Chemical mapping of a 207-nucleotide RNA with DMS and 2A3. The data come from the RNA Mapping Database (RMDB), library OK3TST. High 2A3 reactivity points to a flexible backbone, as in loops and unpaired stretches. The 2A3 profile rests on 2,140 reads.

RNA sequence: GGGAACGACUCGAGUAGAGUCGAAAAGAGGCGAAAUAAUUCCCAUCUCCUGUGUACGGCCGGAGAUGGGUUUGGCCGUACUAAUAAGCCUCAUAGUGACGAGAGUCACGAAUUCUGGAUAGCCUAUGGUAGUCGGCUAUCCUGUGACUACCGUAGAAUACGCUGAUUAUUUCGAUAAUCAGCGUAUAAAAGAAACAACAACAACAAC
Reactivity to DMS in 0.01 (KOAc 150mM, MgCl2 10mM, bicine 150mM(pH8.5), 24C), signal-to-noise 3, nucleotides 027 to 156: g010a050g020g030c000g010a080a090a110u010a100a160u000u020c010c020c000a100u010c010u000c030c020u000g020u010g010u000a060c090g040g000c010c030g020g030a040g020a070u000g000g010g000u010u000u000g020g020c010c040g010u010a170c030u010a090a090u000a130a250g020c000c030u000c020a140u000a210g000u000g010a010c000g020a300g000a300g000u000c000a010c020g010a070a150u000u000c140u010g090g000a150u000a060g000c040c010u000a070u000g000g020u010a080g040u000c180g000g000c060u010a040u000c070c020u000g030u010g000a020c010u000a020c020c010g010u010a090g010a110
Reactivity to 2A3 in 0.01 (KOAc 150mM, MgCl2 10mM, bicine 150mM(pH8.5), 24C), signal-to-noise 3, nucleotides 027 to 156: g010a000g010g000c010g070a070a050a050u190a070a060u130u070c030c010c000a010u050c030u030c020c020u030g010u020g020u110a100c080g090g000c010c000g020g000a020g010a020u100g030g030g000u000u030u000g020g000c030c010g000u010a010c000u020a020a140u020a080a000g000c000c000u000c010a050u100a040g110u130g040a010c020g040a020g010a000g180u000c020a010c000g010a050a060u170u110c060u060g000g000a010u000a010g010c010c010u030a030u040g150g000u050a070g070u060c010g010g010c010u020a040u040c000c000u030g010u020g010a030c010u060a120c040c010g000u000a000g090a050